The data come from the RNA Mapping Database (RMDB), library 15KLIB.
This 170-nucleotide RNA was probed chemically with DMS and 2A3.

RNA sequence: GGGAACGACUCGAGUAGAGUCGAAAAUUGACCAAUACAUGUGUGGCGUUGAUGGAAAACCCAUUAGUGCCUACGCAUUUUUAAUGGCCAAGGAUGGAAUAACCAAACUGGCUGAUGUUGAAGCGGAGCCCAAGUCCGUUCGCGGACUUGAAAAGAAACAACAACAACAAC
Reactivity to DMS in 0.01 (KOAc 150mM, MgCl2 10mM, bicine 150mM(pH8.5), 24C), signal-to-noise 6, nucleotides 027 to 129: u030u040g000a180c020c070a070a150u040a120c290a020u000g010u030g000u030g020g010c020g040u000u060g030a050u000g000g000a180a130a120a200c240c000c000a000u010u010a060g000u000g000c040c000u000a040c020g040c040a000u000u000u000u000u000a030a030u080g020g050c060c010a030a030g010g010a160u030g040g020a160a120u050a140a140c070c050a050a040a210c120u000g010g060c050u030g030a000u060g000u090u070g030a050a130g010c060g030g010a070g040c090c060
Reactivity to 2A3 in 0.01 (KOAc 150mM, MgCl2 10mM, bicine 150mM(pH8.5), 24C), signal-to-noise 3, nucleotides 027 to 129: u040u070g040a040c000c000a010a050u150a080c140a020u020g000u000g010u010g010g000c000g010u000u010g030a000u010g010g000a100a040a070a090c030c000c000a000u000u000a000g010u010g000c000c020u030a000c000g000c000a010u010u010u000u000u060a200a140u140g020g000c020c010a090a060g010g010a020u070g020g100a140a170u150a250a090c020c000a000a050a080c040u000g000g000c030u100g050a040u080g020u010u030g060a100a010g050c060g070g030a000g040c000c020
The DMS profile rests on 14,192 reads.